Source: RMDB library OK3TST, as collected in RNAgym. This 207-nucleotide RNA was probed chemically with 2A3.

RNA sequence: GGGAACGACUCGAGUAGAGUCGAAAACUUCUCCUUCCUUCAGGAGAGAUCCUGACUCUGACUCUCUCUGAGACUAGCUUCGACUUCCUAGGAUCAGGACUUCUCCUAGAGGAAGCUUCAGCUUCAGUCCUUCAGAGUCCUAGAGGAUCAGUCGAAGAUGACAGCCAGAAUUCGUUCUGGCUGUCAUAAAAGAAACAACAACAACAAC
Reactivity to 2A3 in 0.01 (KOAc 150mM, MgCl2 10mM, bicine 150mM(pH8.5), 24C), signal-to-noise 1, nucleotides 027 to 156: c020u090u100c050u070c010c000u050u080c010c030u040u080c070a030g010g010a020g030a000g000a060u060c040c030u120g050a100c050u090c150u210g030a050c000u010c010u030c010u050c100u140g010a010g040a100c080u030a020g040c000u040u020c000g080a070c000u060u090c020c000u000a000g010g010a040u060c060a040g050g000a040c000u140u080c080u070c030c080u030a120g000a030g130g080a020a000g000c000u080u100c060a040g000c000u040u060c000a000g010u000c000c060u070u160c060a060g000a060g000u000c000c000u080a080g020a080g060g030a070u100c060a010g000u040c020g030a030a020g040

2A3 adducts were read by reverse transcription with SuperScript II with manganese. The RNA was probed in 150 mM KOAc, 10 mM MgCl2 and 150 mM bicine (pH 8.5) at 24 C.